Notes:
Structure probing data (DMS and 2A3) for a 207-nucleotide construct. Reactivities are given for positions 27 through 156. It was measured as part of the RMDB library OK3TST. For DMS, 1,937 sequencing reads were counted.
RNA sequence: GGGAACGACUCGAGUAGAGUCGAAAAAGUUCUAGUCCUCACCUAAGAUCAGACUAACAGGGCCCUCAAAGAAAGAGCACUAGGUUGGGCUUUGUGGUGGGGAUAAGUGUCUCAUUUUUAGUCCCAAAUUAAAAACGAGAUUUUGGGCUGUACAUCACAGUAAUUAAUAUUUCGAUAUUAAUUACUGAAAAGAAACAACAACAACAAC
Reactivity to DMS in 0.01 (KOAc 150mM, MgCl2 10mM, bicine 150mM(pH8.5), 24C), signal-to-noise 1, nucleotides 027 to 156: a060g030u000u010c030u000a300g030u000c010c010u010c030a070c000c030u000a110a140g000a060u010c020a090g000a120c080u000a070a130c110a080g000g030g050c010c010c000u000c050a030a100a200g010a130a150a090g010a110g030c020a090c080u010a050g010g010u000u000g020g020g030c020u000u010u020g040u010g020g050u020g010g020g000g000a000u010a020a080g030u010g030u020c020u010c020a090u000u010u000u000u010a050g010u000c020c060c100a040a090a110u010u000a010a040a060a010a020c020g000a050g010a110u000u000u000u010g000g030g020c050u000g020u000a070c030a160u000c050a260
Reactivity to 2A3 in 0.01 (KOAc 150mM, MgCl2 10mM, bicine 150mM(pH8.5), 24C), signal-to-noise 1, nucleotides 027 to 156: a000g020u030u000c020u020a050g000u000c000c010u000c000a020c020c000u080a140a060g050a280u190c070a110g180a270c100u120a080a020c040a010g050g030g000c020c000c010u010c030a090a090a030g080a020a110a000g070a020g060c000a000c120u070a000g100g080u090u030g000g000g000c000u010u020u020g030u000g000g000u020g000g000g100g010a010u010a020a000g010u000g070u010c000u010c060a060u120u170u020u070u210a030g080u200c000c000c000a000a020a000u100u120a040a070a140a050a000c080g070a070g020a160u030u000u020u020g000g010g020c000u040g030u050a050c030a040u090c040a040